[RMDB]
RNA sequence: GGGAACGACUCGAGUAGAGUCGAAAAGAUAUGGAACCAUCGUAUGAUACGAGGAUCUCGCAUCGGAAACGAUGCGAGGGAGUAUCCUACGAGUGGUUCCUAAGUCAAAACUAGAGUUCGCUCUAGACGUAUUAACCUACUUCGGUAGGUUAAUACGAAAAGAAACAACAACAACAAC
Reactivity to DMS in 0.01 (KOAc 150mM, MgCl2 10mM, bicine 150mM(pH8.5), 24C), signal-to-noise 5, nucleotides 027 to 126: g010a060u000a300u010g010g010a020a000c010c000a050u000c000g020u010a000u000g000a020u000a000c010g010a130g000g000a030u010c000u000c000g010c000a010u000c010g000g000a170a120a220c000g000a020u000g010c010g000a000g000g000g000a030g010u000a010u000c000c060u000a010c000g000a030g020u010g010g000u000u000c010c000u000a010a090g010u010c040a070a090a130a220c010u000a020g000a030g010u000u010c290g010c030u000c000u000a010g000a300
Reactivity to 2A3 in 0.01 (KOAc 150mM, MgCl2 10mM, bicine 150mM(pH8.5), 24C), signal-to-noise 5, nucleotides 027 to 126: g020a030u110a040u230g020g000a000a000c010c000a010u020c000g020u010a010u040g020a010u010a010c010g060a300g120g030a020u000c000u000c000g010c000a010u000c000g010g040a070a060a040c010g010a000u010g010c000g000a000g000g000g000a010g000u000a000u020c020c000u010a010c010g040a030g090u080g010g000u010u000c000c000u000a040a010g020u010c030a030a010a110a150c010u010a010g010a010g030u120u140c260g060c130u020c000u010a030g010a090
An RNA of 177 nucleotides, treated with DMS and 2A3 and read out base by base. 2A3 is a SHAPE reagent: it acylates the 2'-hydroxyl of flexible nucleotides of all four kinds. DMS adducts were read by reverse transcription with MarathonRT. The DMS profile rests on 8,130 reads.